RNA sequence: GGGAACGACUCGAGUAGAGUCGAAAAGAUGCUAGGAGUAGGCGGCGACCGAAGCGAGGAGGAAAGCAAAGAAAGCCACGGGGCUAGCGAGUGGAUGUUCCGCCCCAAGGGGAGCCGAGUGAGGCUUGUACACACCAGUUCGCUGGUGUGAAAAGAAACAACAACAACAAC
Reactivity to 2A3 in 0.01 (KOAc 150mM, MgCl2 10mM, bicine 150mM(pH8.5), 24C), signal-to-noise 9, nucleotides 027 to 129: g060a020u160g030c070u070a020g010g030a020g040u120a040g090g030c020g010g010c050g030a070c030c000g020a040a010g040c040g030a020g010g000a010g000g000a060a020a010g030c070a050a030a030g090a060a110a010g040c010c010a040c070g020g010g020g000c020u060a010g020c020g040a010g050u090g030g060a050u130g060u110u040c040c030g010c020c000c000c020a060a070g000g000g000g000a010g000c000c020g020a040g020u150g030a030g010g010c000u040u050g050u070a020
Reactivity to DMS in 0.01 (KOAc 150mM, MgCl2 10mM, bicine 150mM(pH8.5), 24C), signal-to-noise 9, nucleotides 027 to 129: g030a110u000g030c060u000a050g030g020a040g000u000a050g000g000c090g030g000c130g020a080c050c020g030a140a060g000c140g000a060g030g030a010g020g030a050a030a050g020c220a070a090a070g000a060a090a100g020c040c040a120c140g000g000g000g000c020u010a030g020c050g000a080g000u000g010g000a100u030g000u020u010c030c040g040c050c020c010c000a110a050g000g000g010g000a060g020c030c020g000a070g000u050g020a070g020g020c060u000u000g040u010a130
About this RNA
The record gives the reactivity of an RNA of 170 nucleotides to 2A3 and DMS. For 2A3 the reverse transcriptase was SuperScript II with manganese. Values are in units of 0.01, from 0 to 300, in steps of 10. For DMS the reverse transcriptase was MarathonRT. Reactivities are given for positions 27 through 129. The reactions ran in a buffer of 150 mM KOAc, 10 mM MgCl2 and 150 mM bicine (pH 8.5), at 24 C.